[RMDB]
RNA sequence: GGGAACGACUCGAGUAGAGUCGAAAAGAUAUGGACGUGUGCACGCAACAGCUCAGGUCGGAAACGACUGAGACAUGCGUGAUCACGUCCUAAGUCAAAGACUCCCAAGCUUCGGCUUGGGAGUCAACCUGUUUAAAGUGUUCGCACUUUAAACAGGAAAAGAAACAACAACAACAAC
Reactivity to DMS in 0.01 (KOAc 150mM, MgCl2 10mM, bicine 150mM(pH8.5), 24C), signal-to-noise 5, nucleotides 027 to 126: g000a040u000a300u000g000g010a010c000g020u000g000u010g010c000a000c000g020c000a020a070c250a160g000c010u000c000a010g010g000u000c000g000g010a080a080a160c010g010a070c000u000g000a010g000a030c080a200u000g000c010g020u000g000a110u000c000a010c000g010u000c000c010u010a000a070g000u010c020a090a070a130g000a030c000u000c000c000c000a010a010g010c000u000u000c210g020g000c000u000u000g000g020g010a000g000u000c010a010a030

Chemical mapping of a 177-nucleotide RNA with DMS. Reactivities are given for positions 27 through 126. The RNA was probed in 150 mM KOAc, 10 mM MgCl2 and 150 mM bicine (pH 8.5) at 24 C.